Structure probing data (DMS and 2A3) for a 177-nucleotide construct.
For 2A3, 2,048 sequencing reads were counted.
The DMS profile rests on 1,021 reads.
In probing experiments dimethyl sulfate is read out at A N1 and C N3, which are open when not base-paired.
The RNA was probed in 150 mM KOAc, 10 mM MgCl2 and 150 mM bicine (pH 8.5) at 24 C.
As a SHAPE reagent, 2A3 marks flexible, mostly unpaired nucleotides at the ribose 2'-OH.

RNA sequence: GGGAACGACUCGAGUAGAGUCGAAAAGAUAUGGAUCGGAACUACAGGGAUAACAGCGAAGAACUCGGAAACGAGGGAGCUGCUAAUACCUGCCGAUCCUAAGUCAAAACGGAAGUUCGCUUCCGAAUCAUCUAUGGCAGUUCGCUGCCAUAGAUGAAAAAGAAACAACAACAACAAC
Reactivity to DMS in 0.01 (KOAc 150mM, MgCl2 10mM, bicine 150mM(pH8.5), 24C), signal-to-noise 2, nucleotides 027 to 126: g010a030u010a300u020g000g000a000u020c010g000g010a120a030c030u020a300c020a000g000g010g020a130u010a110a160c010a010g010c000g000a120a160g030a110a250c000u010c000g000g010a150a050a110c010g000a010g000g000g050a020g000c000u000g040c000u010a180a100u000a120c010c000u000g000c000c010g030a030u000c010c000u000a000a060g010u010c060a030a090a110a150c020g000g000a030a040g050u000u000c160g000c000u000u000c000c000g000a090a090
Reactivity to 2A3 in 0.01 (KOAc 150mM, MgCl2 10mM, bicine 150mM(pH8.5), 24C), signal-to-noise 2, nucleotides 027 to 126: g040a010u070a050u160g010g000a000u000c020g010g040a080a060c170u280a090c300a020g030g020g020a030u050a170a000c020a000g060c000g260a300a020g050a150a070c010u020c000g000g020a130a000a060c030g000a000g010g040g030a000g000c010u000g010c000u000a040a030u140a300c000c000u000g000c000c010g000a010u020c000c000u010a010a000g030u020c020a080a000a040a020c020g000g000a010a000g000u090u240c300g040c080u020u000c000c000g000a010a120